[RMDB]
RNA sequence: GGGAACGACUCGAGUAGAGUCGAAAAGUGCAUAUGAUUUUGUCUCUCAAGAAUUACGUGCCGCAGAGGACCCAGAAUUUGAGACUUUUUAUACUAAAAAUUUACUUCUAAAUGAAGGUAUAAGAGCAUGGAUGGCAACACAAGAUCAACCACAUGACGGUACAUCAACAUUCGUGUUGAUGUACCGAAAAGAAACAACAACAACAAC
Reactivity to 2A3 in 0.01 (KOAc 150mM, MgCl2 10mM, bicine 150mM(pH8.5), 24C), signal-to-noise 2, nucleotides 027 to 156: g030u020g030c030a030u050a130u160g080a080u070u160u140u130g040u060c020u000c000u020c070a040a090g010a190a060u050u040a130c200g010u010g010c070c030g030c050a050g030a010g110g020a050c020c000c010a010g090a140a050u160u040u110g000a090g040a070c000u110u130u070u120u080a030u050a030c020u130a020a190a130a160a300u110u150u190a090c030u090u050c030u080a180a120a070u210g010a040a000g000g030u020a030u020a120a010g010a030g010c010a050u050g000g080a020u040g040g000c020a080a020c000a000c000a060a020g020a070u170c000a020a020c020c010a030c010a090u170g020a020

The record gives the reactivity of an RNA of 207 nucleotides to 2A3. Values cover nucleotides 27 to 156. It was measured as part of the RMDB library OK3TST. The RNA was probed in 150 mM KOAc, 10 mM MgCl2 and 150 mM bicine (pH 8.5) at 24 C.